Structure probing data (2A3 and DMS) for a 177-nucleotide construct. For DMS, 1,939 sequencing reads were counted. Source: RMDB library OK1LIB, as collected in RNAgym. Conditions: 150 mM KOAc, 10 mM MgCl2 and 150 mM bicine (pH 8.5), 24 C. For 2A3, 1,343 sequencing reads were counted.

[RMDB]
RNA sequence: GGGAACGACUCGAGUAGAGUCGAAAAGCCGAAGCCCUGGGAGCACGGGAAGAAGAAUUCCUGGCGCUGAAGGUCGAGGGCAUUCUCGACUGCGCCGAGCUGCUGGUGGUGGCGCUGUGCGACCGCAUGUUUCCGGAUGUUUCGACAUCCGGAAACAAAAAGAAACAACAACAACAAC
Reactivity to 2A3 in 0.01 (KOAc 150mM, MgCl2 10mM, bicine 150mM(pH8.5), 24C), signal-to-noise 3, nucleotides 027 to 126: g000c010c010g050a080a010g020c000c010c040u040g000g000g110a040g000c030a030c070g080g070g010a040a000g080a090a030g040a010a130u050u020c000c000u010g000g010c050g000c040u090g140a250a050g040g010u010c020g000a020g050g030g090c020a020u300u080c010u000c000g000a000c000u100g000c030g000c020c010g010a030g000c050u090g030c010u040g000g100u220g040g030u070g020g070c060g040c070u040g060u040g040c020g010a070c000c070g010c060a070
Reactivity to DMS in 0.01 (KOAc 150mM, MgCl2 10mM, bicine 150mM(pH8.5), 24C), signal-to-noise 2, nucleotides 027 to 126: g000c000c040g010a090a190g040c030c000c000u000g000g000g000a110g000c000a200c270g000g020g020a010a090g000a180a120g010a120a150u000u000c000c000u010g030g000c080g030c030u000g010a150a110g030g000u000c030g030a050g000g000g050c260a050u050u050c000u000c000g000a030c000u020g000c030g000c020c000g000a050g010c030u000g020c050u000g000g050u000g000g070u000g000g000c080g010c050u000g000u000g000c080g020a170c110c000g000c140a100